[RMDB]
RNA sequence: GGGAACGACUCGAGUAGAGUCGAAAAGAUUCGCUGUGCGCAACAGUGGCGCCAGCGCAGUUGUCGAAGGCAUUGGUGAUCACGGUUGUGAAUACAUGACCGGCGGCCGCGUGGUGGUACUGGGCAACAAUAAACCGUGGUUCGCCACGGUUUAUUGAAAAGAAACAACAACAACAAC
Reactivity to 2A3 in 0.01 (KOAc 150mM, MgCl2 10mM, bicine 150mM(pH8.5), 24C), signal-to-noise 3, nucleotides 027 to 126: g040a120u080u080c040g000c070u070g090u190g120c050g010c030a020a190c030a230g080u050g160g000c000g010c000c000a030g040c000g000c020a020g050u100u080g020u000c020g060a090a050g050g000c050a030u050u130g050g000u040g080a090u050c020a010c060g130g020u140u200g040u020g020a120a070u160a150c020a010u030g040a030c000c020g010g020c030g000g000c000c000g010c030g030u040g030g040u040g030g100u030a040c040u050g000g020g000c000a050a010
Reactivity to DMS in 0.01 (KOAc 150mM, MgCl2 10mM, bicine 150mM(pH8.5), 24C), signal-to-noise 5, nucleotides 027 to 126: g000a150u010u000c040g020c020u000g000u020g020c060g020c050a110a130c140a080g020u010g000g010c010g020c000c000a020g000c020g030c100a020g020u000u000g030u000c050g000a120a080g000g010c030a060u000u000g010g010u000g000a070u000c030a060c010g010g000u000u010g020u000g010a120a100u000a080c050a050u000g000a070c010c010g010g010c060g010g010c020c040g010c070g020u010g000g020u010g000g000u000a050c050u000g000g010g020c080a070a130